[RMDB]
RNA sequence: GGGAACGACUCGAGUAGAGUCGAAAAUUUAUUAGAUAUGGAUACCUCUUGGAUUUAUAAGUGGAACGCGACUCGGAAACGAGUCACAGUGACGAAGUUAUUGUCAGAGGAUCCUAAGUCGAGACAACUAUUACAAUCGGUUCGCCGAUUGUAAUAGAAAAGAAACAACAACAACAAC
Reactivity to 2A3 in 0.01 (KOAc 150mM, MgCl2 10mM, bicine 150mM(pH8.5), 24C), signal-to-noise 3, nucleotides 027 to 126: u090u080u050a140u050u130a120g010a010u040a010u110g040g000a010u280a300c000c000u070c050u170u210g150g000a060u210u300u080a140u150a170a110g110u200g140g030a070a000c020g000c020g050a000c000u020c010g020g000a020a050a030c010g010a000g010u000c010a010c020a010g030u050g020a020c050g070a150a020g090u120u130a100u170u230g020u030c000a000g000a000g020g010a000u000c000c010u020a060a010g010u000c010g000a000g000a040c070a090a040
Reactivity to DMS in 0.01 (KOAc 150mM, MgCl2 10mM, bicine 150mM(pH8.5), 24C), signal-to-noise 4, nucleotides 027 to 126: u000u010u010a110u020u000a140g000a070u000a300u000g000g000a020u000a130c010c000u000c010u010u010g030g010a060u000u020u000a030u010a050a100g010u020g010g010a180a030c020g010c040g010a010c000u000c000g010g000a120a070a140c000g000a010g010u000c000a000c020a080g020u000g010a130c070g000a060a110g010u000u000a020u000u000g020u000c030a030g000a020g020g010a090u000c000c000u000a020a100g010u000c010g000a150g010a090c240a070a150